[RMDB]
RNA sequence: GGGAACGACUCGAGUAGAGUCGAAAAGCUAGUCGGAGACGACUAGCAACGAUCAGUUCGCUGAUCGGAAGGUGCAUUCAAAUACGCUAGAAGCACCAAUAUUCGACGCAUAGCGUAAAACUGAGAAAGCAGAUAACAAAAAUAAAAAGGCGUCGGGCGAUGAUUAGUCAUUCGUGACUAAUCAUCGAAAAGAAACAACAACAACAAC
Reactivity to 2A3 in 0.01 (KOAc 150mM, MgCl2 10mM, bicine 150mM(pH8.5), 24C), signal-to-noise 3, nucleotides 027 to 156: g000c000u010a000g000u000c000g020g010a050g020a120c000g000a010c000u000a000g000c000a000a000c000g020a010u000c010a000g010u040u090c150g030c110u010g000a000u000c000g000g050a060a040g000g000u020g000c110a300u020u040c000a010a030a090u090a040c010g020c020u010a020g000a050a000g020c020a010c000c020a010a010u150a080u060u090c010g000a010c000g000c030a060u100a030g010c000g000u020a040a040a040a060c030u040g000a020g150a190a080a020g100c070a010g020a120u170a170a040c090a090a090a070a030a010u160a030a080a020a020a000g090g000c000g000u010c000g000g010g000
Reactivity to DMS in 0.01 (KOAc 150mM, MgCl2 10mM, bicine 150mM(pH8.5), 24C), signal-to-noise 1, nucleotides 027 to 156: g070c020u000a000g000u030c000g060g020a300g030a290c020g040a000c000u030a010g050c000a010a030c010g000a000u020c000a040g010u000u000c290g030c020u040g020a010u000c000g050g000a130a090g020g060u000g000c000a100u000u000c040a050a130a230u000a010c060g000c010u000a110g030a110a070g000c010a030c000c010a090a130u000a130u000u000c000g020a050c030g040c010a180u000a110g000c000g010u000a050a080a110a210c110u020g020a230g040a180a090a070g000c010a050g000a210u020a040a230c140a000a060a090a090a090u000a000a120a050a110a110g060g000c040g000u000c020g040g000g030